[RMDB]
RNA sequence: GGGAACGACUCGAGUAGAGUCGAAAAGAUAUGGAGAGAGCGAGGAUCUAUUGAUCGGAAACGAUCACGGUAGGGAGCUCUACUCCUAAGUCAAACACUCUGAAUUAGUUCGCUAAUUCAGAGUGAAGAUGUUUCACAAGUUCGCUUGUGAAACAUCAAAAGAAACAACAACAACAAC
Reactivity to 2A3 in 0.01 (KOAc 150mM, MgCl2 10mM, bicine 150mM(pH8.5), 24C), signal-to-noise 3, nucleotides 027 to 126: g020a010u060a040u110g020g000a010g010a000g000a000g000c030g060a300g100g070a040u000c000u010a040u060u100g010a020u000c020g000g070a060a050a030c010g010a000u000c020a010c100g080g010u040a030g020g030g010a020g000c000u020c000u100a300c000u020c000c000u010a090a000g020u020c020a010a060a050c000a000c010u010c000u010g000a000a010u010u000a010g070u060u100c300g000c190u010a000a000u010u000c000a000g010a000g000u000g000a000a000
Reactivity to DMS in 0.01 (KOAc 150mM, MgCl2 10mM, bicine 150mM(pH8.5), 24C), signal-to-noise 4, nucleotides 027 to 126: g010a050u010a300u010g010g010a010g000a070g000a010g030c000g030a140g030g010a060u010c000u000a040u000u000g010a020u000c010g020g000a080a050a190c000g010a010u000c000a050c300g020g000u000a020g020g000g000a090g020c010u010c010u000a140c020u010c000c010u000a020a100g010u000c040a110a100a220c010a020c000u000c000u000g000a030a010u000u000a000g000u000u030c220g000c010u010a000a010u000u000c000a010g010a000g010u000g000a030a030